[RMDB]
RNA sequence: GGGAACGACUCGAGUAGAGUCGAAAAGGAGCCAGUUAUGCGCGGGAUCAUCUUGGCCGGCGGUUCGGGCACCCGGCUGUACCCGAUCACCAUGGGGAUCAGCAAGCAGCUGCUGCCGGUCUACGACUGUAUGCCUUAUUUUCGAAUAAGGCAUACAAAAAGAAACAACAACAACAAC
Reactivity to DMS in 0.01 (KOAc 150mM, MgCl2 10mM, bicine 150mM(pH8.5), 24C), signal-to-noise 5, nucleotides 027 to 126: g010g010a090g000c020c010a080g020u030u010a060u000g000c050g030c020g000g000g010a130u020c080a080u020c050u030u010g000g000c000c000g000g010c010g020g010u000u030c110g000g010g000c040a080c070c060c090g010g010c000u020g010u000a220c040c030c010g000a080u040c190a100c190c150a100u040g000g000g000g000a140u030c010a040g020c020a080a070g010c100a080g000c040u000g010c020u010g000c000c000g010g010u000c000u010a010c190g000a100c170
Reactivity to 2A3 in 0.01 (KOAc 150mM, MgCl2 10mM, bicine 150mM(pH8.5), 24C), signal-to-noise 9, nucleotides 027 to 126: g070g000a030g030c020c010a020g030u130u120a070u150g070c090g000c030g020g010g030a050u060c040a030u040c100u100u140g010g000c000c000g000g000c000g010g020u070u170c080g030g010g000c030a070c010c030c010g070g010c000u010g000u020a040c000c000c030g050a120u160c090a070c140c030a110u230g010g000g000g050a090u200c010a000g000c010a040a030g040c040a010g030c000u070g000c000u010g020c010c000g000g020u000c010u010a010c030g100a020c060

Overview
An RNA of 177 nucleotides, treated with DMS and 2A3 and read out base by base. It was measured as part of the RMDB library OK1LIB.